RNA sequence: GGGAACGACUCGAGUAGAGUCGAAAAACUUGGCAUUUCGUUAAGUCCCACCUAGUCUCAAGCCUGUUGGUCAUCUGUUACUUCUGAAAUGUUAUAUAUCCUUGGUAAGAAUUAUCGUCGGACUCGACGUCGUAAUAUGCUUCGGCAUAUUACGACGAAAAGAAACAACAACAACAAC
Reactivity to DMS in 0.01 (KOAc 150mM, MgCl2 10mM, bicine 150mM(pH8.5), 24C), signal-to-noise 2, nucleotides 027 to 126: a220c080u020u000g010g000c010a130u010u030u020c060g000u000u010a060a080g030u010c010c000c120a080c100c050u030a000g010u000c000u000c120a100a140g000c010c000u000g000u030u010g030g010u040c010a080u040c040u000g010u030u000a030c040u010u000c010u000g010a070a080a040u010g030u000u000a030u020a080u010a110u000c000c010u010u010g010g010u000a080a100g020a100a070u070u020a070u010c030g030u010c020g040g000a120c040u000c040g020a170
Reactivity to 2A3 in 0.01 (KOAc 150mM, MgCl2 10mM, bicine 150mM(pH8.5), 24C), signal-to-noise 4, nucleotides 027 to 126: a000c020u000u000g040g000c030a110u000u100u170c040g040u040u040a030a000g070u050c010c000c000a040c010c010u060a040g030u000c000u010c030a130a010g010c000c020u060g070u120u110g040g040u010c000a100u030c020u040g000u110u050a110c030u080u020c000u020g010a010a060a090u110g030u070u000a070u000a000u030a050u140c030c000u010u070g050g010u050a020a050g070a130a090u210u060a070u130c010g090u030c020g050g020a040c000u020c050g010a020

This 177-nucleotide RNA was probed chemically with DMS and 2A3. For 2A3, 1,996 sequencing reads were counted. For DMS, 3,093 sequencing reads were counted.